An RNA of 207 nucleotides, treated with 2A3 and DMS and read out base by base. DMS adducts were read by reverse transcription with MarathonRT. The reactions ran in a buffer of 150 mM KOAc, 10 mM MgCl2 and 150 mM bicine (pH 8.5), at 24 C. 2A3 adducts were read by reverse transcription with SuperScript II with manganese. 2A3 is a SHAPE reagent: it acylates the 2'-hydroxyl of flexible nucleotides of all four kinds. DMS (dimethyl sulfate) methylates the pairing face of unpaired adenines and cytosines.

[RMDB]
RNA sequence: GGGAACGACUCGAGUAGAGUCGAAAAGGGACAUGGGUGACAGAAAAGUUACCACAGGGAUAACUGGCUUGUAGCAGCCGAGCGACCAUAGCGACGCUGCUUUUUGAUUCUUCGAUGUCGGCUCUUCCUAUCAUCGCGAAGCAGAGAUUGCGAAGUGCUAUCCUCUUGAGUUCGCUCAAGAGGAUAGAAAAGAAACAACAACAACAAC
Reactivity to 2A3 in 0.01 (KOAc 150mM, MgCl2 10mM, bicine 150mM(pH8.5), 24C), signal-to-noise 2, nucleotides 027 to 156: g030g000g040a030c040a050u080g040g010g020u050g030a020c030a010g300a140a170a140a010g020u030u030a010c010c030a070c030a030g100g070g000a070u060a170a080c050u050g020g030c030u040u060g090u120a010g010c010a000g000c020c020g000a000g000c020g020a090c030c100a130u110a050g000c000g020a020c010g000c000u000g000c000u010u000u000u040u010g010a010u020u030c000u010u010c000g030a030u190g000u000c000g040g040c090u030c000u100u100c030c010u140a140u170c060a130u080c020g000c010g070a060a020g020c070a040g020a050g060a180u150u140g020c010g040a050a030g030u010g030
Reactivity to DMS in 0.01 (KOAc 150mM, MgCl2 10mM, bicine 150mM(pH8.5), 24C), signal-to-noise 1, nucleotides 027 to 156: g000g030g020a030c070a060u000g020g000g000u000g010a230c110a140g020a110a140a090a120g000u010u000a000c010c010a110c070a140g000g010g000a130u000a050a150c100u020g000g030c050u000u000g000u000a090g040c030a050g020c000c010g030a230g010c000g030a110c090c090a130u000a150g000c040g000a220c270g000c000u020g010c000u030u010u000u020u000g020a100u010u000c050u000u000c010g000a110u010g010u000c020g010g040c050u000c060u010u000c040c070u030a140u000c050a070u000c090g050c040g000a070a130g020c070a110g010a160g020a070u010u010g010c030g000a020a150g010u030g000
The 2A3 profile rests on 1,170 reads.